[RMDB]
An RNA of 177 nucleotides, treated with DMS and read out base by base. Values cover nucleotides 27 to 126. Values are in units of 0.01, from 0 to 300, in steps of 10. Conditions: 150 mM KOAc, 10 mM MgCl2 and 150 mM bicine (pH 8.5), 24 C.

RNA sequence: GGGAACGACUCGAGUAGAGUCGAAAAUUCGUUGGUUAUAUAUUGGGUCACAAAGUUCGGUCCUCGUCAUUAUGGCUAAAAACAGCACCGUGCGUAGAUUCUGCUGGACGCUGAAUAACUAUACCGAACUCUACUCUGCUUUCGAGCAGAGUAGAGUAAAAGAAACAACAACAACAAC
Reactivity to DMS in 0.01 (KOAc 150mM, MgCl2 10mM, bicine 150mM(pH8.5), 24C), signal-to-noise 1, nucleotides 027 to 126: u000u020c080g000u000u000g010g000u000u010a120u000a020u000a170u000u010g000g000g000u010c030a090c120a130a130a110g000u000u000c110g000g010u000c050c030u000c080g010u000c120a130u010u010a160u010g010g060c050u000a070a060a070a080a160c130a020g000c000a050c070c090g010u000g010c020g040u030a110g020a180u010u000c080u020g030c010u000g020g020a040c090g020c010u000g020a110a060u000a030a040c070u020a100u010a130c030c050g000a050